[RMDB]
RNA sequence: GGGAACGACUCGAGUAGAGUCGAAAAGAAAUCAGUUGGCGAUCGAACGACGGGGCAUACAAGGUCCUCUACACAAUGACCGUAGCGCGAGCUACCAGUAAGAAGUAGAGGAAGCCGAUGUUCCGUCUAUAUUGGAGGACUUCGGUCCUCCAAUAUAAAAAGAAACAACAACAACAAC
Reactivity to DMS in 0.01 (KOAc 150mM, MgCl2 10mM, bicine 150mM(pH8.5), 24C), signal-to-noise 4, nucleotides 027 to 126: g000a050a110a060u040c100a110g000u000u000g000g020c180g010a070u010c070g000a070a060c160g000a010c000g020g000g000g010c000a020u030a030c190a160a150g010g000u000c000c010u020c000u010a000c020a020c120a090a300u010g000a060c230c260g010u000a010g000c000g000c300g020a200g000c000u000a000c000c000a010g020u000a060a010g000a110a090g010u000a000g000a030g000g000a040a020g000c030c160g000a030u000g000u000u000c000c000g020u000c000
Reactivity to 2A3 in 0.01 (KOAc 150mM, MgCl2 10mM, bicine 150mM(pH8.5), 24C), signal-to-noise 2, nucleotides 027 to 126: g080a000a060a010u160c060a030g010u020u010g060g030c080g090a090u030c060g040a090a060c040g000a020c000g010g000g000g000c000a000u030a060c070a130a140g010g000u000c000c010u000c000u000a030c040a000c010a020a060u030g010a010c000c000g010u000a000g000c050g010c020g020a010g020c010u000a000c010c010a000g010u010a040a000g050a110a010g000u010a000g000a000g000g000a000a000g000c010c000g010a000u000g010u010u000c010c000g010u000c000